An RNA of 170 nucleotides, treated with 2A3 and DMS and read out base by base. The RNA was probed in 150 mM KOAc, 10 mM MgCl2 and 150 mM bicine (pH 8.5) at 24 C. Values cover nucleotides 27 to 129. 2A3 adducts were read by reverse transcription with SuperScript II with manganese. DMS adducts were read by reverse transcription with MarathonRT. It was measured as part of the RMDB library 15KLIB. For 2A3, 8,169 sequencing reads were counted.
RNA sequence: GGGAACGACUCGAGUAGAGUCGAAAACGUCCUUCCCUUUUCUUAUUAUUCCGAGGAUGUUUCCCAGCCAGGGAUUUUCGUCCUCGAGUUUCUUGAUGGUUCUCCUGCUCUUCCGGAGCUUUCUUUCGUGCAGCAACGUUCGCGUUGCUGAAAAGAAACAACAACAACAAC
Reactivity to 2A3 in 0.01 (KOAc 150mM, MgCl2 10mM, bicine 150mM(pH8.5), 24C), signal-to-noise 4, nucleotides 027 to 129: c010g120u060c020c000u040u050c000c000c030u030u110u060u000c090u070u140a280u080u020a060u120u090c050c050g020a020g010g010a010u010g010u000u010u050c020c000c020a020g100c110c060a050g050g020g000a040u090u040u030u100c020g000u000c000c000u000c010g010a030g000u040u020u000c010u030u100g070a120u080g050g000u030u010c000u020c040c020u030g090c000u010c000u040u060c040c020g010g020a050g010c000u000u040u000c000u010u010u050c050g090u040g120
Reactivity to DMS in 0.01 (KOAc 150mM, MgCl2 10mM, bicine 150mM(pH8.5), 24C), signal-to-noise 3, nucleotides 027 to 129: c160g010u030c050c050u010u020c010c010c060u000u000u000u000c140u030u050a070u070u100a100u060u060c140c040g020a050g000g000a040u030g000u000u000u000c010c020c010a180g030c200c190a160g000g000g000a020u000u010u000u000c040g050u010c060c050u010c050g020a000g040u070u030u000c020u070u020g020a180u070g050g000u030u020c030u050c020c040u010g000c030u050c040u020u040c080c140g080g070a020g000c110u000u000u000c020u000u020u060c160g050u030g010